[RMDB]
RNA sequence: GGGAACGACUCGAGUAGAGUCGAAAAUGGUGCAACAUCUCUAUGCUUCGUGUACCCACUGGAUUUUGUGCGUACUCGUCUUGGAGCCGAUGUUGGAAAAGGAGUGGAUAGAGAGUUUCAAGGUCUACGUAUUACUACUGUUCGCAGUAGUAAUACGAAAAGAAACAACAACAACAAC
Reactivity to DMS in 0.01 (KOAc 150mM, MgCl2 10mM, bicine 150mM(pH8.5), 24C), signal-to-noise 9, nucleotides 027 to 126: u000g010g020u000g010c040a050a050c050a050u000c020u000c060u010a060u000g000c120u010u000c020g030u000g000u000a050c010c070c010a040c040u000g010g010a150u000u000u010u000g010u000g020c300g010u000a030c020u000c040g000u010c060u000u000g010g000a080g020c300c120g000a050u000g010u010u000g010g010a050a070a100a100g010g010a070g020u000g010g000a090u000a070g000a080g010a100g010u000u000u000c050a080a080g010g010u000c040u000a150
Reactivity to 2A3 in 0.01 (KOAc 150mM, MgCl2 10mM, bicine 150mM(pH8.5), 24C), signal-to-noise 9, nucleotides 027 to 126: u070g040g010u100g030c020a020a010c010a090u030c010u000c020u060a050u130g060c080u030u070c030g030u010g010u050a020c040c130c010a010c030u060g160g200a300u160u120u160u160g030u010g000c010g010u010a020c020u020c050g070u020c060u050u080g030g020a020g020c040c040g050a040u040g020u050u050g020g010a040a080a010a040g030g010a040g020u060g020g030a010u040a050g060a000g010a010g030u010u060u070c050a070a030g080g020u020c020u030a040